[RMDB]
RNA sequence: GGGAACGACUCGAGUAGAGUCGAAAAUACCGCUUCGGCGGUAGAGCCCACCUUUGUGUGUACUAACCGUGUUGUCAGGAUGGGUCCCAUUGGGACCCUACCCUUGGAUUUACACGGGAAAGUACACACUCUGGUACCCCCCAUUCUUCGGAAUGAACAUUCCAAAACAAUUCGUUGUUUUGGAAUGAAAAGAAACAACAACAACAAC
Reactivity to DMS in 0.01 (KOAc 150mM, MgCl2 10mM, bicine 150mM(pH8.5), 24C), signal-to-noise 2, nucleotides 027 to 156: u010a020c010c020g020c010u000u000c300g040g020c000g050g030u000a000g000a130g010c040c030c040a300c030c030u000u000u000g000u010g070u000g000u010a000c010u000a100a300c010c000g020u000g010u000u000g000u000c020a030g010g000a060u000g000g000g000u000c010c000c030a300u000u000g070g050g020a040c000c000c000u000a000c050c000c010u000u010g050g000a060u010u000u000a020c010a030c040g030g010g000a070a090a100g000u000a020c000a030c000a020c000u000c010u010g000g020u000a180c010c000c000c020c010c010a130u000u000c000u000u010c130g000g000a120a080u000g000a140a300
Reactivity to 2A3 in 0.01 (KOAc 150mM, MgCl2 10mM, bicine 150mM(pH8.5), 24C), signal-to-noise 5, nucleotides 027 to 156: u010a000c010c000g000c010u040u070c240g150g000c000g020g000u000a010g000a020g050c010c010c000a040c010c000u010u010u000g000u000g000u000g000u000a000c000u020a040a090c000c000g010u000g010u010u020g030u020c010a010g000g000a010u010g010g000g000u010c010c000c040a200u190u300g000g000g000a000c000c000c000u010a050c000c000c010u010u130g130g000a020u240u190u170a000c000a000c000g000g000g000a140a030a000g000u000a000c000a000c000a000c000u000c010u000g000g030u130a140c000c000c000c000c000c010a000u010u000c000u010u040c200g090g040a010a010u070g010a040a010
The data come from the RNA Mapping Database (RMDB), library RNAMAK. An RNA of 207 nucleotides, treated with DMS and 2A3 and read out base by base.